Conditions: 150 mM KOAc, 10 mM MgCl2 and 150 mM bicine (pH 8.5), 24 C. This 177-nucleotide RNA was probed chemically with DMS and 2A3. The 2A3 profile rests on 1,811 reads.
RNA sequence: GGGAACGACUCGAGUAGAGUCGAAAAUCCGGGACGCAUCACCAAACGGUGGUCAGCCCGAAAGUCUCGCUUCGGCAAACACACGACACGGUAGGGGAGCGGCGAGUAGGCCGCAAGGCUCGAAACCUUGUUACUGCAUCUUCGGAUGCAGUAACAAAAAAGAAACAACAACAACAAC
Reactivity to DMS in 0.01 (KOAc 150mM, MgCl2 10mM, bicine 150mM(pH8.5), 24C), signal-to-noise 3, nucleotides 027 to 126: u040c030c000g010g000g000a040c040g030c300a010u000c020a000c000c000a140a160a140c300g030g000u010g000g000u000c070a160g020c000c000c000g010a100a050a110g000u040c010u000c030g000c110u000u030c090g000g040c100a130a050a030c090a030c080a090c070g030a080c060a070c080g000g010u010a090g000g000g000g000a080g010c060g020g000c030g020a170g020u040a110g000g000c000c020g070c060a010a050g000g000c000u000c080g020a030a080a200c120c030
Reactivity to 2A3 in 0.01 (KOAc 150mM, MgCl2 10mM, bicine 150mM(pH8.5), 24C), signal-to-noise 2, nucleotides 027 to 126: u020c010c000g020g000g020a040c020g000c030a000u020c000a010c010c000a240a160a070c140g000g030u010g000g030u030c010a010g040c030c000c000g020a120a060a000g040u030c000u000c040g040c040u030u070c060g060g000c010a080a120a010c050a000c010a000c040g070a010c030a010c090g060g000u060a040g010g010g000g000a050g020c000g010g020c010g050a090g100u140a100g140g000c010c000g000c030a020a040g030g000c030u010c040g030a090a010a010c010c000